[RMDB]
RNA sequence: GGGAACGACUCGAGUAGAGUCGAAAAGAAGCCGGCAUCGAACUGGCCACCGUCUAUCUGCUGUCCACCGAAAACCUGCAGCGCGAUCCCGACGAGCUUGCAGCACUCAUCGAGAUCAUCACCGAUGGCUUCAUAGACAUUUCGAUGUCUAUGAAGCAAAAGAAACAACAACAACAAC
Reactivity to 2A3 in 0.01 (KOAc 150mM, MgCl2 10mM, bicine 150mM(pH8.5), 24C), signal-to-noise 2, nucleotides 027 to 126: g110a060a000g040c050c040g040g000c020a100u070c050g040a090a050c040u080g020g030c020c000a010c020c030g070u000c030u090a120u030c020u080g050c010u030g020u050c010c020a040c050c050g040a050a040a060a090c010c010u050g000c010a000g030c000g030c030g020a070u030c000c000c000g040a040c020g020a020g030c020u080u130g000c050a020g060c020a040c030u050c010a030u000c020g040a040g020a140u060c020a010u050c030a050c020c030g010a020u120g120
Reactivity to DMS in 0.01 (KOAc 150mM, MgCl2 10mM, bicine 150mM(pH8.5), 24C), signal-to-noise 2, nucleotides 027 to 126: g040a160a150g030c050c020g040g000c040a080u000c090g010a060a110c030u010g020g000c000c030a040c000c050g020u000c040u000a060u000c060u010g010c050u000g000u000c030c030a090c070c060g000a140a050a070a130c130c030u000g000c020a070g000c020g010c060g000a070u000c030c010c000g010a180c050g000a050g020c020u010u000g020c040a120g010c090a160c020u000c030a060u020c010g000a060g000a060u000c030a050u000c040a200c020c010g020a080u000g030